[RMDB]
RNA sequence: GGGAACGACUCGAGUAGAGUCGAAAAUUUGUCUACUCGAUUCAACUAAACGAAAUUUUGUCCUUCAGCACACAUGUCUAUGUGUGCUGAAGUGAAAUUGGAAUUUCGCUAGGUUUGCUUAGUAGCUUACAUUAAUCACAUUCGUGUGAUUAAUGUAAAAAGAAACAACAACAACAAC
Reactivity to DMS in 0.01 (KOAc 150mM, MgCl2 10mM, bicine 150mM(pH8.5), 24C), signal-to-noise 8, nucleotides 027 to 126: u020u020u020g010u010c000u000a010c000u000c090g010a050u000u010c070a060a130c020u000a050a120a200c010g000a010a010a010u000u000u000u010g010u010c020c000u000u000c010a000g000c010a010c000a000c000a010u000g010u030c240u030a010u000g020u000g010u000g000c010u000g000a000a000g000u030g010a010a060a130u020u030g010g000a020a000u000u000u000c000g010c040u000a220g010g010u000u000u010g010c190u000u010a070g010u010a050g010c100u000
Reactivity to 2A3 in 0.01 (KOAc 150mM, MgCl2 10mM, bicine 150mM(pH8.5), 24C), signal-to-noise 9, nucleotides 027 to 126: u120u070u170g060u000c000u000a000c000u010c020g060a050u080u050c020a020a020c010u040a040a030a020c010g010a000a000a010u010u010u020u060g060u020c000c000u000u000c000a000g010c000a000c000a000c000a010u040g200u300c190u300a020u010g000u050g000u000g000c000u000g010a000a000g000u010g000a020a010a010u100u110g050g010a000a000u000u000u000c000g000c020u020a020g030g040u060u050u100g020c020u040u040a040g030u060a020g100c020u010

Chemical mapping of a 177-nucleotide RNA with DMS and 2A3. The data come from the RNA Mapping Database (RMDB), libraries RFM100 and RFMREP. The RNA was probed in 150 mM KOAc, 10 mM MgCl2 and 150 mM bicine (pH 8.5) at 24 C. For 2A3 the reverse transcriptase was SuperScript II with manganese.